[RMDB]
RNA sequence: GGGAACGACUCGAGUAGAGUCGAAAACAUCUUUCCUCCAUACACAGUGACUCCAGCUUGGGAGGGGCAGGGCUAGGCUGAGCCAGCACUCCCUGUGGUGUCUGCCUGCCACGUGCAGCUCUGGAGUAAAACCUGGAGAAGUUCGCUUCUCCAGGAACCCUACUUGUACGUUCGCGUACAAGUAGGGAAAAGAAACAACAACAACAAC
Reactivity to 2A3 in 0.01 (KOAc 150mM, MgCl2 10mM, bicine 150mM(pH8.5), 24C), signal-to-noise 3, nucleotides 027 to 156: c040a120u090c050u070u090u050c010c000u000c000c020a050u150a090c050a020c010a080g130u070g130a040c010u010c010c000a050g040c130u140u130g050g000g000a010g020g010g030g000c010a080g080g000g000c050u240a030g100g000c070u110g040a020g070c030c020a010g010c020a020c040u030c010c020c020u010g030u010g020g020u000g060u020c020u010g030c000c010u010g020c000c030a200c170g150u230g010c000a020g000c020u010c010u020g000g000a000g000u010a020a040a010a010c010c000u000g020g000a000g000a000a000g020u040u070c140g000c110u000u000c000u000c000c000a000g000g000a000a000
Reactivity to DMS in 0.01 (KOAc 150mM, MgCl2 10mM, bicine 150mM(pH8.5), 24C), signal-to-noise 1, nucleotides 027 to 156: c080a110u010c050u000u000u000c030c000u000c030c020a120u010a160c090a140c050a050g030u000g010a080c000u000c020c010a060g030c110u000u020g000g000g010a040g000g010g030g020c030a170g030g000g030c040u000a080g030g000c120u000g000a280g030c060c010a080g000c060a100c000u000c010c000c050u040g000u010g050g030u000g010u020c010u020g030c070c020u000g050c020c020a060c080g050u020g020c050a110g000c060u000c030u010g060g010a100g020u010a050a020a110a070c020c000u010g010g000a000g050a030a020g020u000u000c290g030c030u010u000c000u000c020c030a010g010g000a000a050

The data come from the RNA Mapping Database (RMDB), library M2RFOK. Chemical mapping of a 207-nucleotide RNA with 2A3 and DMS. The reactions ran in a buffer of 150 mM KOAc, 10 mM MgCl2 and 150 mM bicine (pH 8.5), at 24 C. 2A3 adducts were read by reverse transcription with SuperScript II with manganese. For DMS the reverse transcriptase was MarathonRT. For DMS, 1,839 sequencing reads were counted. Reactivities are given for positions 27 through 156.